[RMDB]
RNA sequence: GGGAACGACUCGAGUAGAGUCGAAAAACAACGCGCUAACCUGGUUGCUAAAAUCGGUGAGAACAUCAACAUUCGUCGUGUUGCUGCUCUGGAAGGCGAUGUUCUGGGUACUUACCUGCACGGCGCAGCACGUGCACCUCUUCGGAGGUGCACGUGCAAAAGAAACAACAACAACAAC
Reactivity to DMS in 0.01 (KOAc 150mM, MgCl2 10mM, bicine 150mM(pH8.5), 24C), signal-to-noise 4, nucleotides 027 to 126: a100c060a040a080c080g010c030g000c010u000a110a120c070c020u020g040g000u010u010g030c160u010a060a040a060a040u000c040g010g010u000g020a070g010a030a050c020a030u000c020a040a080c040a060u010u000c230g020u010c200g000u000g010u000u000g000c100u000g020c020u010c050u020g010g000a090a140g000g000c050g010a050u000g000u010u000c060u000g010g000g020u000a070c160u030u010a080c010c020u000g030c110a100c120g000g020c020g030c150a090
Reactivity to 2A3 in 0.01 (KOAc 150mM, MgCl2 10mM, bicine 150mM(pH8.5), 24C), signal-to-noise 3, nucleotides 027 to 126: a000c060a030a050c020g030c010g010c020u060a010a070c040c020u050g030g040u080u120g010c100u150a060a060a050a090u090c040g090g030u060g060a040g010a020a020c010a050u070c000a010a040c010a120u090u140c030g050u030c040g010u120g010u080u060g040c040u040g000c000u020c050u090g110g110a100a050g070g010c030g030a030u060g020u080u010c050u070g020g010g060u070a140c050u080u110a040c020c010u030g030c100a040c080g020g010c010g000c030a000